Structure probing data (DMS and 2A3) for a 177-nucleotide construct. The RNA was probed in 150 mM KOAc, 10 mM MgCl2 and 150 mM bicine (pH 8.5) at 24 C. For DMS the reverse transcriptase was MarathonRT.
[RMDB]
RNA sequence: GGGAACGACUCGAGUAGAGUCGAAAACCAAACCUUAUCAAACUCCGAAUACCGUGCAAUGGAACGUGGCAGUGAGACAGUGGGGGAUAAGCUUCAUUGUCGAGAGGGAAACAACCCAGAUCAGCAGAUCAUGUACGUCUUUCGAGACGUACAUGAUAAAAGAAACAACAACAACAAC
Reactivity to DMS in 0.01 (KOAc 150mM, MgCl2 10mM, bicine 150mM(pH8.5), 24C), signal-to-noise 5, nucleotides 027 to 126: c010c020a090a070a080c100c020u020u010a040u020c050a060a150a120c040u000c030c030g010a110a080u030a080c070c010g000u020g000c080a090a050u010g000g020a070a080c140g010u020g000g030c050a030g020u000g010a150g000a020c020a010g030u000g020g000g020g000g000a070u010a050a070g010c020u000u010c020a070u010u000g010u010c010g000a080g000a050g020g000g010a100a080a070c130a050a130c030c010c000a070g010a060u010c050a100g000c140a090g010
Reactivity to 2A3 in 0.01 (KOAc 150mM, MgCl2 10mM, bicine 150mM(pH8.5), 24C), signal-to-noise 6, nucleotides 027 to 126: c030c000a050a060a090c020c000u120u050a090u120c050a080a060a020c030u010c020c010g080a120a020u060a070c030c000g030u040g070c040a050a130u140g020g040a060a040c030g030u040g060g000c030a010g020u000g040a030g000a020c000a020g010u020g010g000g000g000g040a090u110a230a040g070c000u020u010c010a020u010u010g020u020c030g010a030g010a030g050g020g000a040a090a030c040a010a030c000c030c000a000g020a120u050c030a000g090c020a020g020